[RMDB]
RNA sequence: GGGAACGACUCGAGUAGAGUCGAAAAGACGGCGCUAUCCCGGGGACGGGUCGUAACCCGCUCGUCCCCGCCUUUACACCUUCCGGAAGGAGUUCAGCCCCCCUCCGUCGGAAGGUCUAGGCGGGCGUCUUAGCGGGUCAUUCGUGACCCGCUAAGAAAAAGAAACAACAACAACAAC
Reactivity to 2A3 in 0.01 (KOAc 150mM, MgCl2 10mM, bicine 150mM(pH8.5), 24C), signal-to-noise 4, nucleotides 027 to 126: g080a020c050g010g030c010g020c020u030a050u100c020c000c010g000g010g000g010a010c010g020g010g000u130c030g020u040a120a160c020c010c000g030c000u020c010g070u070c000c000c000c010g000c000c000u010u000u010a020c030a000c010c000u000u030c010c000g060g010a150a180g100g010a060g010u140u230c110a090g000c000c000c010c000c020c010u000c000c000g050u040c000g000g000a000a000g000g000u010c000u010a000g000g010c000g020g010g000c020g000
Reactivity to DMS in 0.01 (KOAc 150mM, MgCl2 10mM, bicine 150mM(pH8.5), 24C), signal-to-noise 4, nucleotides 027 to 126: g010a080c110g000g020c010g000c020u000a060u010c010c020c020g040g000g000g000a090c000g010g000g020u010c070g010u030a130a180c120c070c050g000c030u010c030g000u010c020c000c000c000g010c010c000u000u010u010a140c300a040c000c000u010u010c000c000g010g000a090a160g020g010a020g010u010u050c220a150g020c010c010c010c020c160c010u000c000c000g000u010c000g000g000a010a010g020g000u000c020u010a020g000g010c010g020g010g010c040g010